Chemical mapping of a 207-nucleotide RNA with 2A3. The reactions ran in a buffer of 150 mM KOAc, 10 mM MgCl2 and 150 mM bicine (pH 8.5), at 24 C. For 2A3 the reverse transcriptase was SuperScript II with manganese.
RNA sequence: GGGAACGACUCGAGUAGAGUCGAAAAAAAUAAGUGCCAACUCUAAGCGCACUGAGUUCGCUCUCGCUGCUUGAUCGAGAGUGACUCUGUCGGCCUGGGAGCGUCUCCGACCCAGUGUCCGGCAUCGUUGAGGAGACUUGCCGGUCAGAUCAGGCCACCCAUAAAUGACCUUCGGGUCAUUUAUGGGAAAAGAAACAACAACAACAAC
Reactivity to 2A3 in 0.01 (KOAc 150mM, MgCl2 10mM, bicine 150mM(pH8.5), 24C), signal-to-noise 2, nucleotides 027 to 156: a000a000a080u260a030a000g000u000g000c010c000a190a180c120u110c110u300a060a190g010c010g040c120a000c020u040g000a000g000u180u300c000g000c010u000c010u010c010g010c060u140g080c070u240u290g110a230u240c010g000a000g000a000g010u010g000a000c000u000c010u000g030u020c000g010g000c000c000u000g000g010g000a050g050c050g000u010c010u000c010c000g050a010c000c000c000a000g010u020g040u020c000c000g010g000c010a060u200c080g100u120u170g090a010g030g000a000g010a020c010u030u080g110c080c070g020g000u010c070a060g000a250u100c020a030g000g020c020c000a010